[RMDB]
RNA sequence: GGGAACGACUCGAGUAGAGUCGAAAAGGUUUGAGCGGUCGAACCCAUAGGGGAGUGUGAUCCUGGUACCGCCGUAGAAACAGGAUUACGACGCCUUACCGAGAUUCAAACUCGGCCCCUAUCAGAGGUGACUCUGAUUGAAAGGUCUGCGCUUAGCGCUAAAUAGCUGGUUCGCCAGCUAUUUAGCAAAAGAAACAACAACAACAAC
Reactivity to 2A3 in 0.01 (KOAc 150mM, MgCl2 10mM, bicine 150mM(pH8.5), 24C), signal-to-noise 5, nucleotides 027 to 156: g030g010u010u040u040g010a020g000c020g010g020u110c020g010a030a030c010c020c040a060u140a060g010g010g000g010a090g050u120g000u010g030a000u010c000c000u010g010g020u060a040c020c030g080c020c010g100u180a050g050a050a300a010c000a000g000g000a000u010u010a010c060g040a050c040g090c020c020u060u060a040c000c010g010a010g020a060u230u300c150a100a090a100c020u010c010g000g040c000c000c000c000u010a010u010c010a000g000a010g050g000u110g030a060c000u010c010u010g010a030u030u100g070a060a020a010g020g010u040c080u130g040c040g000c070u120u140a060g040c030
Reactivity to DMS in 0.01 (KOAc 150mM, MgCl2 10mM, bicine 150mM(pH8.5), 24C), signal-to-noise 2, nucleotides 027 to 156: g040g020u000u000u000g000a050g010c060g020g000u010c090g030a030a160c010c010c050a140u020a090g040g020g030g010a110g050u000g020u000g020a030u000c020c010u000g010g010u000a110c160c030g050c040c210g010u010a110g030a110a120a260c020a140g000g010a100u010u010a030c030g010a100c050g000c050c010u000u010a120c010c010g000a050g020a250u000u000c250a170a150a200c010u000c000g000g010c010c020c010c020u010a040u000c010a030g010a050g000g000u000g000a300c010u010c000u000g000a010u000u010g000a110a110a060g000g010u000c050u020g010c050g030c020u000u000a090g020c170